[RMDB]
Conditions: 150 mM KOAc, 10 mM MgCl2 and 150 mM bicine (pH 8.5), 24 C. The record gives the reactivity of an RNA of 177 nucleotides to 2A3 and DMS. The 2A3 profile rests on 8,408 reads. For DMS the reverse transcriptase was MarathonRT.
RNA sequence: GGGAACGACUCGAGUAGAGUCGAAAAACUAGGAGCGCACAUCUCUCUAAGACUGUACGACAGUCUGUCUCUCAAGCACGCUUGUUCAACGAGAGAGAGAGAGCGUUGGAACAAGUGUGCAACGAAAUCUACGCGUUAAGUUCGCUUAACGCGUAGAAAAAGAAACAACAACAACAAC
Reactivity to 2A3 in 0.01 (KOAc 150mM, MgCl2 10mM, bicine 150mM(pH8.5), 24C), signal-to-noise 4, nucleotides 027 to 126: a010c070u070a050g020g040a020g010c030g060c060a040c020a200u050c020u010c000u000c000u040a080a020g010a010c010u040g110u150a030c060g060a030c080a000g010u000c020u050g020u020c130u000c000u000c060a050a040g000c000a000c000g010c000u000u000g000u000u000c000a010a010c000g010a030g010a020g000a010g010a000g000a000g020a220g050c020g000u010u030g130g010a010a000c000a000a010g000u010g000u000g000c010a030a030c040g050a030a040a050
Reactivity to DMS in 0.01 (KOAc 150mM, MgCl2 10mM, bicine 150mM(pH8.5), 24C), signal-to-noise 3, nucleotides 027 to 126: a090c130u000a100g010g010a070g030c090g000c120a070c110a170u010c020u020c030u000c030u000a140a120g000a010c010u000g010u000a070c110g020a300c300a000g000u010c000u000g020u010c090u000c000u010c030a140a210g010c000a010c010g010c010u000u000g010u010u000c020a020a020c010g000a060g000a110g000a070g020a080g000a050g010a000g000c010g020u000u000g010g000a000a010c010a020a010g020u000g010u000g010c000a050a030c200g000a080a070a080